Structure probing data (2A3 and DMS) for a 177-nucleotide construct. As a SHAPE reagent, 2A3 marks flexible, mostly unpaired nucleotides at the ribose 2'-OH. It was measured as part of the RMDB library OK2TRN. For 2A3, 982 sequencing reads were counted.
RNA sequence: GGGAACGACUCGAGUAGAGUCGAAAACACACAGUCUGAGUGUCAGUCUGUCAGAGUGAGACACUCUCAGUGAGAGUCUGACUCUCACAGUCUCAGAGAGAGUGUGUGACACAGAGUGACACAGUGAUCGGUAUCGGCAGUUCGCUGCCGAUACCGAAAAAGAAACAACAACAACAAC
Reactivity to 2A3 in 0.01 (KOAc 150mM, MgCl2 10mM, bicine 150mM(pH8.5), 24C), signal-to-noise 1, nucleotides 027 to 126: c030a010c010a000c000a040g130u030c040u160g150a000g050u000g000u000c020a030g180u000c010u010g040u050c010a060g130a050g300u050g060a120g100a000c000a010c000u000c010u020c010a040g020u020g090a020g000a010g050u060c130u300g160a150c020u000c000u000c020a020c000a000g130u050c020u070c170a190g090a030g000a000g010a000g080u080g000u000g030u020g000a000c030a000c010a090g030a020g110u010g010a020c030a010c010a020g030u020g050a080
Reactivity to DMS in 0.01 (KOAc 150mM, MgCl2 10mM, bicine 150mM(pH8.5), 24C), signal-to-noise 1, nucleotides 027 to 126: c130a140c030a090c250a100g000u010c010u000g000a200g030u000g040u020c020a030g030u000c000u000g000u000c220a100g010a050g040u020g000a160g000a090c010a050c010u000c000u000c050a220g000u000g010a020g010a010g000u000c160u000g000a050c000u000c020u000c030a030c010a090g040u000c120u010c170a050g000a150g010a000g000a030g010u010g040u000g010u000g000a070c050a140c050a040g010a010g010u000g010a020c000a010c050a100g010u010g020a030